[RMDB]
RNA sequence: GGGAACGACUCGAGUAGAGUCGAAAAGAAGUCGAGUCUAUGCUGAAACGAUACUACGCACGAGAUUCCAAGGUCUCUGUAGAACGACCGCUUGUGACGACAAAGCUAUCACGAUCGACAUACGACAGGUAUCUUGUAGGUUCGCCUACAAGAUACCAAAAGAAACAACAACAACAAC
Reactivity to 2A3 in 0.01 (KOAc 150mM, MgCl2 10mM, bicine 150mM(pH8.5), 24C), signal-to-noise 4, nucleotides 027 to 126: g150a100a000g010u010c020g010a010g010u000c010u010a050u050g110c060u130g060a090a080a060c070g000a010u030a050c020u040a040c030g040c030a040c060g010a000g000a070u190u150c070c030a070a040g030g000u000c010u000c030u090g100u050a030g060a090a030c060g000a030c000c010g020c020u010u030g010u040g040a110c060g000a040c050a020a090a020g010c050u020a010u060c030a010c060g030a000u020c000g020a030c010a040u120a040c040g010a000c020a000
Reactivity to DMS in 0.01 (KOAc 150mM, MgCl2 10mM, bicine 150mM(pH8.5), 24C), signal-to-noise 3, nucleotides 027 to 126: g000a140a090g020u000c050g020a000g030u000c070u000a050u030g000c050u000g000a050a090a120c250g000a020u000a050c080u010a070c060g020c000a020c030g030a060g000a150u000u080c140c130a050a030g000g020u010c000u000c090u050g000u030a040g020a150a140c150g000a040c000c030g000c000u010u010g000u010g000a200c030g000a150c120a110a030a070g020c090u000a070u020c020a100c100g000a020u010c010g000a010c050a060u000a030c080g000a030c170a110

Description:
Chemical mapping of a 177-nucleotide RNA with 2A3 and DMS. Values cover nucleotides 27 to 126. For DMS the reverse transcriptase was MarathonRT. The 2A3 profile rests on 4,762 reads. Conditions: 150 mM KOAc, 10 mM MgCl2 and 150 mM bicine (pH 8.5), 24 C.